Source: RMDB library OK1LIB, as collected in RNAgym. The record gives the reactivity of an RNA of 177 nucleotides to DMS and 2A3. For DMS the reverse transcriptase was MarathonRT. For 2A3, 2,238 sequencing reads were counted. Conditions: 150 mM KOAc, 10 mM MgCl2 and 150 mM bicine (pH 8.5), 24 C.

[RMDB]
RNA sequence: GGGAACGACUCGAGUAGAGUCGAAAAGAAUAUAAGAGCGCAGUAAUUGUGAGAGCAAACUGCGCCCGGACUGUAGGAUCCGGUGGCACAGCAACGCUCACUCACAAGACGCUGUGCCACAUGAAGACACCAUACGGACGUUCGCGUCCGUAUGGUGAAAAGAAACAACAACAACAAC
Reactivity to DMS in 0.01 (KOAc 150mM, MgCl2 10mM, bicine 150mM(pH8.5), 24C), signal-to-noise 1, nucleotides 027 to 126: g000a150a020u050a020u010a000a080g000a050g000c000g010c000a060g010u000a020a120u000u000g010u040g000a230g000a080g040c000a040a030a010c000u010g000c000g000c000c000c030g050g000a140c000u000g010u000a000g000g000a270u000c000c000g000g090u000g020g000c030a030c000a000g000c000a160a250c090g020c050u000c010a180c040u000c120a110c280a190a050g000a030c140g000c030u010g010u000g000c000c000a000c000a200u000g070a050a050g000a140
Reactivity to 2A3 in 0.01 (KOAc 150mM, MgCl2 10mM, bicine 150mM(pH8.5), 24C), signal-to-noise 3, nucleotides 027 to 126: g040a040a000u170a000u040a130a050g000a030g010c000g000c000a010g020u110a140a180u070u040g010u050g050a060g000a000g060c020a010a050a060c000u000g000c000g000c000c000c010g000g000a010c010u130g110u270a030g070g060a060u010c000c000g030g000u010g000g000c010a000c000a010g000c020a030a150c170g050c030u080c010a040c010u150c000a110c020a070a020g050a020c070g000c010u000g000u000g000c000c000a000c020a050u100g050a060a000g050a040